Structure probing data (2A3) for a 177-nucleotide construct.

[RMDB]
RNA sequence: GGGAACGACUCGAGUAGAGUCGAAAACCUGCUGUCCUUCAUUCCACCGGAGUCUGUCUCAUACAUAAUCAGAUUUCAGUGGAGUGAAGCACAAGAGGCAAAACACGAGCUCGUUCGCGAGCUCGUGCCAGUUACCCCAGUUCGCUGGGGUAACUGGAAAAGAAACAACAACAACAAC
Reactivity to 2A3 in 0.01 (KOAc 150mM, MgCl2 10mM, bicine 150mM(pH8.5), 24C), signal-to-noise 1, nucleotides 027 to 126: c000c000u030g080c020u020g020u050c000c020u000u030c000a000u010u000c000c010a000c020c000g040g000a020g000u020c010u000g070u120c060u040c250a280u240a300c000a060u280a120a100u170c000a000g010a000u000u020u020c000a000g000u020g010g000a000g000u000g020a000a000g000c010a030c000a010a080g040a050g050g090c070a080a020a000a010c030a000c000g010a000g000c000u000c000g040u160u020c130g000c000g100a010g020c000u000c000g020u000g040
Values cover nucleotides 27 to 126.